Structure probing data (2A3 and DMS) for a 177-nucleotide construct. Conditions: 150 mM KOAc, 10 mM MgCl2 and 150 mM bicine (pH 8.5), 24 C. For 2A3, 4,455 sequencing reads were counted. The DMS profile rests on 3,056 reads. Values cover nucleotides 27 to 126.
RNA sequence: GGGAACGACUCGAGUAGAGUCGAAAACACAUGACUACAUUGGUCGACCUGAGCAUAUCGAGUCUCUGUAUAUGCUUUACCGUGCAACACGAGAUCCUACAUACCUCUUGAUGGGAAAAGAACUGGCUACCGUACCAUCAUUCGUGAUGGUACGGUAAAAAGAAACAACAACAACAAC
Reactivity to 2A3 in 0.01 (KOAc 150mM, MgCl2 10mM, bicine 150mM(pH8.5), 24C), signal-to-noise 4, nucleotides 027 to 126: c080a010c020a120u160g030a060c040u110a040c060a240u060u180g050g000u020c000g020a050c000c040u060g020a020g020c020a020u010a030u070c030g060a040g170u040c030u000c020u140g060u080a040u000a010u100g010c000u020u030u050a060c030c000g040u020g060c070a130a010c000a020c060g040a040g010a080u010c000c020u020a050c030a060u090a090c020c020u050c020u080u070g040a080u120g030g030g060a030a100a010a000g040a070a050c030u040g040g000c020
Reactivity to DMS in 0.01 (KOAc 150mM, MgCl2 10mM, bicine 150mM(pH8.5), 24C), signal-to-noise 4, nucleotides 027 to 126: c100a180c130a080u000g010a110c040u010a100c120a090u000u010g020g020u000c040g000a070c080c060u000g000a040g020c020a030u000a020u000c060g000a140g010u010c070u010c120u000g000u000a020u000a040u000g010c030u000u000u010a040c090c030g020u000g010c050a040a060c060a060c070g010a060g000a110u010c030c020u000a080c110a100u010a190c080c040u000c090u000u000g020a070u020g000g000g010a050a060a070a090g010a070a060c070u020g010g020c210